[RMDB]
RNA sequence: GGGAACGACUCGAGUAGAGUCGAAAAGCAGCCUACAAAGAGAGUAUAAGGAAACUGAUCUCCCCGAUGCAUGACAUGAUUGAGUACAUCAAGGGUGAGGUAGUAGUGGAGGCAGCCACAUCAGUUGCACUACCUCGUCUUUCGAGACGAGGUAGUGAAAAGAAACAACAACAACAAC
Reactivity to DMS in 0.01 (KOAc 150mM, MgCl2 10mM, bicine 150mM(pH8.5), 24C), signal-to-noise 2, nucleotides 027 to 126: g010c110a060g020c040c030u020a120c110a000a120a080g010a130g010a070g040u010a080u010a070a100g000g020a060a080a040c030u000g010a010u000c020u000c010c000c040c020g000a070u000g030c040a030u020g010a100c080a120u000g030a090u000u010g020a290g000u030a070c040a010u000c030a040a120g010g010g000u020g010a040g030g020u020a030g000u000a060g000u000g010g020a120g040g010c090a060g020c000c020a040c070a050u010c040a050g010u000u000g020
Reactivity to 2A3 in 0.01 (KOAc 150mM, MgCl2 10mM, bicine 150mM(pH8.5), 24C), signal-to-noise 1, nucleotides 027 to 126: g040c000a000g050c020c030u070a000c100a050a120a010g180a010g020a030g030u090a090u020a190a050g080g000a060a070a040c000u040g040a020u020c000u000c020c000c000c000g010a000u010g000c040a010u030g050a020c010a060u140g100a110u220u180g100a050g080u060a070c000a030u000c050a050a080g100g000g000u260g000a000g010g030u030a040g000u010a010g000u040g000g030a010g090g060c020a000g050c050c000a040c000a050u170c020a070g050u080u120g030

Source information:
Chemical mapping of a 177-nucleotide RNA with DMS and 2A3. DMS (dimethyl sulfate) methylates the pairing face of unpaired adenines and cytosines. The reactions ran in a buffer of 150 mM KOAc, 10 mM MgCl2 and 150 mM bicine (pH 8.5), at 24 C. For DMS, 1,656 sequencing reads were counted. It was measured as part of the RMDB library OK2TRN.